[RMDB]
This 177-nucleotide RNA was probed chemically with 2A3 and DMS. Source: RMDB library OK2TST, as collected in RNAgym. For 2A3, 35,522 sequencing reads were counted. Reactivities are rounded to 0.1 and cut off at 0 and 3. Values cover nucleotides 27 to 126. For DMS, 54,658 sequencing reads were counted.
RNA sequence: GGGAACGACUCGAGUAGAGUCGAAAAGGCCCCUUCCUCUGGGACUAGGCUCAGCUCCCUGGGCAGGACACCUCCUUAGGGGCAUGCUCCCUGCCUGCUGUCGCCACCACUGCCCUCUGUCUGCAGGGCUUAUACUAACUUUCGAGUUAGUAUAAGCAAAAGAAACAACAACAACAAC
Reactivity to 2A3 in 0.01 (KOAc 150mM, MgCl2 10mM, bicine 150mM(pH8.5), 24C), signal-to-noise 8, nucleotides 027 to 126: g080g010c010c010c000c000u030u040c020c020u060c040u050g030g000g010a030c040u070a070g070g030c020u020c080a020g010c030u060c030c010c020u030g020g010g010c020a010g010g020a040c010a060c040c010u050c010c040u040u150a100g020g000g000g010c020a030u090g010c020u070c020c010c010u010g010c000c010u020g010c010u030g040u060c030g010c030c010a040c020c010a050c030u050g020c010c010c000u050c030u050g080u030c020u040g040c030a040g040g050
Reactivity to DMS in 0.01 (KOAc 150mM, MgCl2 10mM, bicine 150mM(pH8.5), 24C), signal-to-noise 9, nucleotides 027 to 126: g010g000c020c010c010c050u000u000c040c020u000c080u000g010g010g010a080c070u000a100g010g010c040u000c060a100g010c110u000c050c050c040u000g000g010g010c090a050g010g000a120c080a100c140c030u000c030c100u010u010a100g020g010g000g010c120a050u000g000c090u000c060c010c010u000g010c030c010u000g010c060u000g010u000c080g010c030c030a110c060c040a090c080u000g010c020c010c010u000c040u000g010u000c050u000g010c100a070g000g000

The reactions ran in a buffer of 150 mM KOAc, 10 mM MgCl2 and 150 mM bicine (pH 8.5), at 24 C.